An RNA of 207 nucleotides, treated with 2A3 and read out base by base. The reactions ran in a buffer of 150 mM KOAc, 10 mM MgCl2 and 150 mM bicine (pH 8.5), at 24 C. Source: RMDB library RNAMAK, as collected in RNAgym. Values are in units of 0.01, from 0 to 300, in steps of 10.

RNA sequence: GGGAACGACUCGAGUAGAGUCGAAAAAUCGCUGGGUAUUCUCUAGCGUGAGGCUUUGAUCUAUGACUGAGCUACUGAAGCGCGCACGGUAGUGUAAGUCAUAGGGAGCCUUCGGGAUACCUGUGCUGAAGCGCGCACGGCAACCGAAAGGUGCGAAUCUCUAUCAUCUCUUCGGAGAUGAUAGAGAAAAAGAAACAACAACAACAAC
Reactivity to 2A3 in 0.01 (KOAc 150mM, MgCl2 10mM, bicine 150mM(pH8.5), 24C), signal-to-noise 2, nucleotides 027 to 156: a020u070c010g000c000u020g000g000g020u020a050u100u040c110u010c140u190a140g110c090g180u210g050a020g010g000c010u300u300u010g000a000u020c010u010a010u000g000a010c000u110g160a020g070c000u000a000c000u010g040a200a010g020c010g000c000g000c000a010c000g000g010u010a000g010u030g090u200a160a000g000u000c000a000u000a000g000g000g000a000g000c000c020u010u070c020g030g000g010a000u000a000c010c010u020g010u010g010c010u040g020a120a020g000c020g000c000g000c000a000c000g000g000c010a030a030c010c010g040a060a050a020g010g010u020g000c000g000a110a150